[RMDB]
RNA sequence: GGGAACGACUCGAGUAGAGUCGAAAAACUCAUUCGCUUUCGCAUCGAAGUCAGCCGGCAUGUCGCCUUUCAUACGACGAGUGAAUUCAGCAGCUUCCUGCGGGAAGGCUUUCUCAUAAGCCGCGAACCGUCAUGCUACUUUCGAGUAGCAUGACGGAAAAGAAACAACAACAACAAC
Reactivity to 2A3 in 0.01 (KOAc 150mM, MgCl2 10mM, bicine 150mM(pH8.5), 24C), signal-to-noise 3, nucleotides 027 to 126: a000c030u030c010a060u070u030c060g030c010u070u110u070c030g020c020a070u040c100g050a050a000g030u020c030a020g070c040c000g000g000c010a000u100g030u030c010g000c010c000u040u030u020c110a090u120a130c030g000a000c010g010a070g050u040g060a060a070u090u110c050a020g010c010a040g010c010u000u000c020c010u040g020c050g000g010g010a070a080g020g000c000u050u040u000c120u020c020a100u130a090a040g050c000c030g020c020g010a030a030
Reactivity to DMS in 0.01 (KOAc 150mM, MgCl2 10mM, bicine 150mM(pH8.5), 24C), signal-to-noise 1, nucleotides 027 to 126: a000c080u000c000a140u000u000c020g000c000u000u010u010c060g050c080a030u010c150g000a060a080g000u030c000a180g090c120c010g000g030c060a070u000g000u000c130g000c100c010u000u030u000c150a060u000a100c000g000a020c110g000a200g000u000g000a060a070u000u020c100a030g000c070a120g160c010u000u030c000c040u000g000c000g020g000g020a150a020g000g000c000u000u000u000c170u000c140a080u000a060a100g000c010c040g020c000g030a150a220